Description
Conditions: 150 mM KOAc, 10 mM MgCl2 and 150 mM bicine (pH 8.5), 24 C. The record gives the reactivity of an RNA of 207 nucleotides to 2A3 and DMS. For DMS, 5,414 sequencing reads were counted. Source: RMDB library OK3TST, as collected in RNAgym.

[RMDB]
RNA sequence: GGGAACGACUCGAGUAGAGUCGAAAACAAAUUUGGGUCAACAAGCCAUGCCUAACAGACCCAAUUACAUUGGCUUCAGGGAUAACUUUGUAGGUCUUAUGUACUACAACAGUACUGGAAAUAUGGGAGUUUUGGCCGGCCAAGCAUCACAACUGAAGACCAAUAGAAUAUUCGUAUUCUAUUGGUCAAAAGAAACAACAACAACAAC
Reactivity to 2A3 in 0.01 (KOAc 150mM, MgCl2 10mM, bicine 150mM(pH8.5), 24C), signal-to-noise 4, nucleotides 027 to 156: c020a000a080a030u040u020u030g010g010g000u040c040a070a060c030a130a040g010c070c040a090u140g030c030c020u040a080a040c030a040g010a060c000c000c010a000a000u030u040a030c030a040u020u060g000g000c000u020u040c070a040g020g040g030a070u030a140a080c010u020u020u050g060u050a030g030g040u030c040u120u220a160u170g040u060a040c000u010a020c020a100a010c030a040g000u020a020c000u040g030g100a040a050a010u190a080u080g070g020g000a040g010u020u020u070u150g030g010c000c000g010g000c010c000a020a010g030c020a060u160c040a020c030a190a000c050u040g030a100a000
Reactivity to DMS in 0.01 (KOAc 150mM, MgCl2 10mM, bicine 150mM(pH8.5), 24C), signal-to-noise 3, nucleotides 027 to 156: c040a070a050a130u000u000u000g010g020g000u000c030a080a140c080a130a080g020c020c060a080u030g010c050c010u020a100a130c090a280g000a080c010c000c010a030a080u010u000a100c090a200u000u000g030g000c070u010u000c030a070g020g000g020a090u010a060a060c030u000u000u000g020u000a020g020g000u010c080u000u020a130u010g020u000a060c000u010a040c050a030a050c100a050g040u000a040c020u010g000g010a050a070a090u000a080u010g010g010g020a060g010u000u000u000u010g030g000c000c050g010g020c020c020a030a080g000c070a070u000c010a030c030a020a300c040u000g000a150a300